This 177-nucleotide RNA was probed chemically with DMS and 2A3.
RNA sequence: GGGAACGACUCGAGUAGAGUCGAAAAUAUUAUAGCGCACUAAAGACGCUGAUCUUUAGUUACCAAGGAACUUUAGUGCUGAGGUCCGAGUUCCAAGGUCCCAUGUCGGUCCUUAGCACUAAUUGAACACCGAUUGUACUUUCGAGUACAAUCGGUGAAAAGAAACAACAACAACAAC
Reactivity to DMS in 0.01 (KOAc 150mM, MgCl2 10mM, bicine 150mM(pH8.5), 24C), signal-to-noise 1, nucleotides 027 to 126: u000a100u010u000a110u000a120g040c070g040c170a050c000u000a010a000a010g000a050c020g020c270u010g000a100u000c010u010u000u000a000g010u000u000a080c130c080a070a150g000g020a100a150c130u000u000u000a010g020u000g010c000u000g020a010g010g000u000c000c000g000a030g010u020u030c170c090a050a090g000g000u000c010c040c010a120u000g010u000c000g000g000u010c000c000u000u000a010g000c000a010c000u010a000a020u000u000g020a140a140
Reactivity to 2A3 in 0.01 (KOAc 150mM, MgCl2 10mM, bicine 150mM(pH8.5), 24C), signal-to-noise 1, nucleotides 027 to 126: u210a040u170u130a170u140a150g130c040g000c070a000c030u020a000a010a020g000a010c040g060c300u100g090a160u000c000u000u000u000a020g030u030u070a060c040c010a010a070g180g000a100a120c000u000u030u000a010g000u000g060c000u000g000a000g000g000u000c010c010g000a010g000u250u050c080c000a040a000g050g020u020c000c000c000a020u110g050u020c000g010g020u000c000c000u010u010a000g000c030a000c000u000a000a010u010u030g010a030a010
The 2A3 profile rests on 1,236 reads.
It was measured as part of the RMDB library M2PK90.
The reactions ran in a buffer of 150 mM KOAc, 10 mM MgCl2 and 150 mM bicine (pH 8.5), at 24 C.
DMS adducts were read by reverse transcription with MarathonRT.